Chemical mapping of a 207-nucleotide RNA with DMS and 2A3. The 2A3 profile rests on 3,900 reads.
[RMDB]
RNA sequence: GGGAACGACUCGAGUAGAGUCGAAAACCGUAGGAGAAGUUGUCAGACGAUGAGGAGCUACUAUGGUUCGAAAGAGCCAUAAACUCCUUCAUCGUCUUGGAUUUACUUCUCCUAAACGGAAAAGUCUAGUCAUAGUGUUCGCACUAUGACUAGACAACGUUAGUAUGGGUUUCGACCCAUACUAACGAAAAGAAACAACAACAACAAC
Reactivity to DMS in 0.01 (KOAc 150mM, MgCl2 10mM, bicine 150mM(pH8.5), 24C), signal-to-noise 2, nucleotides 027 to 156: c000c000g040u010a030g040g000a060g020a010a020g010u010u020g020u000c000a060g020a050c020g020a040u010g020a060g020g010a010g010c010u000a130c110u000a020u010g020g020u000u000c010g000a170a140a280g000a040g020c010c000a040u000a000a050a030c020u000c000c010u000u000c010a020u000c010g020u010c000u000u010g020g010a020u000u010u000a010c010u000u000c000u000c000c010u000a000a030a060c030g050g000a060a080a120a120g030u010c010u000a000g010u020c000a000u000a020g020u000g010u020u000c300g030c010a030c000u000a000u000g000a010c000u000a020g010a000c000a020a040
Reactivity to 2A3 in 0.01 (KOAc 150mM, MgCl2 10mM, bicine 150mM(pH8.5), 24C), signal-to-noise 3, nucleotides 027 to 156: c000c000g020u020a020g010g010a010g000a000a010g000u030u030g020u020c000a000g000a020c000g000a000u000g010a000g010g010a010g000c040u040a030c020u020a050u010g010g010u010u000c000g060a100a080a080g010a020g010c010c010a020u030a030a010a000c000u020c020c000u110u120c040a000u040c010g000u020c000u000u030g000g000a000u000u050u000a000c000u010u000c000u000c000c010u000a010a000a000c010g050g040a150a100a080a020g000u000c010u010a000g000u000c000a000u000a000g010u030g040u080u070c270g050c110a000c000u010a010u010g000a000c000u000a010g010a000c000a000a000